Description:
The record gives the reactivity of an RNA of 177 nucleotides to 2A3 and DMS. For DMS the reverse transcriptase was MarathonRT. The RNA was probed in 150 mM KOAc, 10 mM MgCl2 and 150 mM bicine (pH 8.5) at 24 C. For 2A3 the reverse transcriptase was SuperScript II with manganese. For 2A3, 3,610 sequencing reads were counted. For DMS, 4,112 sequencing reads were counted. It was measured as part of the RMDB library OK1LIB.

RNA sequence: GGGAACGACUCGAGUAGAGUCGAAAAACCGAACCCGAGAUGUGGUUCGUGCGGCAGGCCCACCAGAUCUGUCCGGUCGGGGCGGUCGUGGCCACCAAGACCGACCUGUAUCCGCGCUGGCGGGAGAUCACAGACCUUAGUUCGCUAAGGUCUGUGAAAAAGAAACAACAACAACAAC
Reactivity to 2A3 in 0.01 (KOAc 150mM, MgCl2 10mM, bicine 150mM(pH8.5), 24C), signal-to-noise 4, nucleotides 027 to 126: a000c000c010g010a010a010c000c000c010g080a100g090a300u220g080u190g020g000u010u010c010g010u100g020c020g030g020c060a060g020g070c000c000c000a000c000c000a000g020a070u060c040u110g150u060c050c020g010g010u020c010g010g010g000g000c010g000g000u010c040g030u070g010g030c090c060a090c080c010a040a020g020a020c000c010g020a050c000c010u010g020u100a080u070c000c030g020c030g010c050u030g040g000c010g000g000g000a020g010a030
Reactivity to DMS in 0.01 (KOAc 150mM, MgCl2 10mM, bicine 150mM(pH8.5), 24C), signal-to-noise 2, nucleotides 027 to 126: a070c040c000g000a030a010c000c010c000g030a180g010a110u060g010u040g000g000u000u010c000g010u020g000c100g010g000c130a050g000g020c020c020c010a070c020c000a040g000a100u050c020u020g000u030c110c020g000g010u000c020g040g000g010g010c030g020g000u000c000g000u000g000g000c160c110a040c080c050a160a150g010a030c010c000g010a010c000c000u000g020u040a040u060c000c000g000c110g000c040u000g020g010c050g010g000g010a100g000a140